[RMDB]
RNA sequence: GGGAACGACUCGAGUAGAGUCGAAAAGUCCACUCCCACUUCGAAAGAGGUGCUAUAAAGCUAUUAAGAAGUUUGCUUACUUCCUAGGGUUUUAUAGAUCCGUUGCUUGUAUACAAUAUACGUGUAUACAUCAAUACCCCAAGAGGAAAUGCUUGGUUCACAAUACACUGUUCGCAGUGUAUUGUGAAAAAGAAACAACAACAACAAC
Reactivity to DMS in 0.01 (KOAc 150mM, MgCl2 10mM, bicine 150mM(pH8.5), 24C), signal-to-noise 1, nucleotides 027 to 156: g000u000c060c050a170c060u000c040c030c000a080c060u010u020c030g000a170a040a100g010a080g030g010u000g030c050u010a010u000a040a050a020g000c040u010a050u010u010a110a060g000a010a030g000u020u000u000g030c170u010u010a040c010u000u000c030c010u010a220g000g010g000u020u020u020u000a050u010a020g000a090u010c030c050g000u000u000g020c040u020u040g020u000a020u000a000c010a050a150u000a200u000a070c160g060u010g010u010a010u000a000c000a040u000c000a040a070u000a200c090c030c030c020a120a080g060a220g040g010a080a140a140u000g000c010u000u000g000g040u050
Reactivity to 2A3 in 0.01 (KOAc 150mM, MgCl2 10mM, bicine 150mM(pH8.5), 24C), signal-to-noise 3, nucleotides 027 to 156: g050u010c030c030a040c090u060c020c030c010a040c010u050u070c030g070a080a060a050g060a030g000g010u050g000c010u010a010u020a010a010a000g000c000u010a030u270u050a270a020g000a000a010g000u070u090u180g110c030u110u100a020c000u000u000c010c000u010a000g000g000g030u000u000u000u000a000u000a000g020a050u040c040c050g080u020u030g050c110u020u030g020u010a010u010a010c020a050a040u130a060u090a300c110g040u030g000u020a000u000a000c010a000u020c000a010a040u100a130c040c030c000c010a020a000g030a010g040g130a080a080a020u070g020c010u010u020g020g000u000